[RMDB]
RNA sequence: GGGAACGACUCGAGUAGAGUCGAAAAGAUAUGGAUCGGAGUGUUACAGCCCAUGGCAAGGCGUGUAAGGAUCGGAAACGAUCUAUCACGCUGAUGACCCAUGGGAAGGUGGCUCCGAUCCUAAGUCCUCUCAAUAAAUCUUCGGAUUUAUUGAGAGAAAAGAAACAACAACAACAAC
Reactivity to 2A3 in 0.01 (KOAc 150mM, MgCl2 10mM, bicine 150mM(pH8.5), 24C), signal-to-noise 7, nucleotides 027 to 126: g010a000u030a000u070g010g000a000u000c000g030g010a010g000u170g120u300u270a070c010a020g010c000c010c000a000u000g020g000c050a100a230g020g000c130g020u020g020u090a300a300g130g000a010u000c000g010g000a000a010a010c000g010a000u000c000u000a060u040c000a000c000g000c000u000g020a040u020g000a000c010c000c010a000u010g020g000g050a010a020g120g270u030g020g000c000u000c000c010g000a000u000c000c000u000a000a000g000u000c000
Reactivity to DMS in 0.01 (KOAc 150mM, MgCl2 10mM, bicine 150mM(pH8.5), 24C), signal-to-noise 7, nucleotides 027 to 126: g000a030u000a050u010g000g000a010u000c000g000g000a030g010u000g040u010u010a090c020a110g000c000c000c000a010u000g000g000c010a070a030g000g030c000g030u010g010u010a080a300g010g010a000u000c000g010g000a010a020a050c000g010a010u000c000u000a160u000c000a010c000g010c000u000g000a040u010g010a040c300c000c010a000u000g000g000g010a000a010g010g030u000g000g000c000u000c000c000g000a000u000c000c000u000a000a060g000u000c010
Overview
The data come from the RNA Mapping Database (RMDB), library TTRDES. An RNA of 177 nucleotides, treated with 2A3 and DMS and read out base by base. The reactions ran in a buffer of 150 mM KOAc, 10 mM MgCl2 and 150 mM bicine (pH 8.5), at 24 C. 2A3 adducts were read by reverse transcription with SuperScript II with manganese. For 2A3, 28,596 sequencing reads were counted.